Structure probing data (2A3 and DMS) for a 177-nucleotide construct.
Reactivities are given for positions 27 through 126.
The RNA was probed in 150 mM KOAc, 10 mM MgCl2 and 150 mM bicine (pH 8.5) at 24 C.
The 2A3 profile rests on 1,917 reads.
For DMS the reverse transcriptase was MarathonRT.

RNA sequence: GGGAACGACUCGAGUAGAGUCGAAAAGAUAUGGAUUCUCUGGCCGUCUUGGAUUUAUCGGAAACGAUUGUCAGACGGCCAGAGGAAUCCUAAGUCAAACCGGAACUUCCUUCGGGAAGUUCCGGAAGUGAGUUAUUGAGUUCGCUCAAUAACUCACAAAAGAAACAACAACAACAAC
Reactivity to 2A3 in 0.01 (KOAc 150mM, MgCl2 10mM, bicine 150mM(pH8.5), 24C), signal-to-noise 1, nucleotides 027 to 126: g010a030u120a060u170g000g000a000u050u030c030u010c000u000g000g020c010c000g000u030c050u090u250g180g030a090u300u300u160a040u040c030g010g020a090a020a030c000g030a030u020u060g000u020c000a000g000a000c000g020g000c000c010a000g000a000g000g000a010a000u000c000c010u000a010a010g050u010c040a000a010a120c000c000g000g010a000a000c000u010u020c020c000u030u100c210g080g010g010a000a000g000u030u040c000c000g020g010a000a010
Reactivity to DMS in 0.01 (KOAc 150mM, MgCl2 10mM, bicine 150mM(pH8.5), 24C), signal-to-noise 1, nucleotides 027 to 126: g000a070u010a300u010g000g000a040u000u000c000u000c010u000g000g000c010c000g010u000c000u010u000g000g000a020u000u020u000a010u000c010g010g000a090a050a230c000g010a010u000u000g000u000c020a060g000a020c010g020g010c000c000a000g000a000g000g020a010a000u000c000c000u000a010a050g000u010c050a070a150a150c020c000g000g000a020a000c000u010u000c000c010u000u020c210g010g000g010a010a000g010u000u010c000c000g000g000a000a010